[RMDB]
RNA sequence: GGGAACGACUCGAGUAGAGUCGAAAAUCAUCAUUCGUGAUGACAAUACGCGUACUACAGUCUGGGAGGAAUAGAACUACAGUCGCAUCCCAAAUAGGAUGCCGGACUGCUAUUCCAUCGAUCAGACUGUAUCGCCUGUCUCUGGGUUCGCCCAGAACUCUACAUCCGUAUUCGUACGGAUGUAGAGAAAAGAAACAACAACAACAAC
Reactivity to 2A3 in 0.01 (KOAc 150mM, MgCl2 10mM, bicine 150mM(pH8.5), 24C), signal-to-noise 6, nucleotides 027 to 156: u020c010a000u000c010a010u060u150c180g130u050g020a020u030g010a030c060a060a100u250a190c160g020c000g030u070a100c060u000a000c030a000g000u000c000u010g020g000g000a040g020g000a010a000u010a020g040a090a080c110u180a050c250a000g000u010c010g000c000a000u030c000c020c020a150a300a120u220a070g000g000a000u010g040c080c090g210g060a000c000u000g000c000u000a000u000u000c000c040a130u140c030g060a060u070c000a000g000a000c000u010g000u000a010u010c000g010c000c030u130g080u030c030u000c000u110g030g000g030u050u090c170g100c050c000c010a010g000a040a030
Reactivity to DMS in 0.01 (KOAc 150mM, MgCl2 10mM, bicine 150mM(pH8.5), 24C), signal-to-noise 2, nucleotides 027 to 156: u000c000a000u000c010a060u010u000c300g030u000g050a000u010g000a020c030a080a130u010a050c070g010c030g030u010a090c070u000a010c000a010g010u010c010u000g020g010g030a280g060g020a080a050u010a070g000a070a090c000u030a140c000a010g000u000c010g000c000a030u010c010c010c020a040a120a200u000a020g000g020a020u000g010c030c110g060g030a020c000u000g000c010u000a100u000u000c000c000a100u000c070g010a170u010c010a020g010a040c010u000g000u000a000u000c030g050c030c070u000g000u010c050u000c040u000g020g010g010u000u010c130g020c020c000c010a050g000a020a110
Structure probing data (2A3 and DMS) for a 207-nucleotide construct. For 2A3, 5,618 sequencing reads were counted. For DMS, 5,385 sequencing reads were counted. The RNA was probed in 150 mM KOAc, 10 mM MgCl2 and 150 mM bicine (pH 8.5) at 24 C. Source: RMDB library RNAMAK, as collected in RNAgym.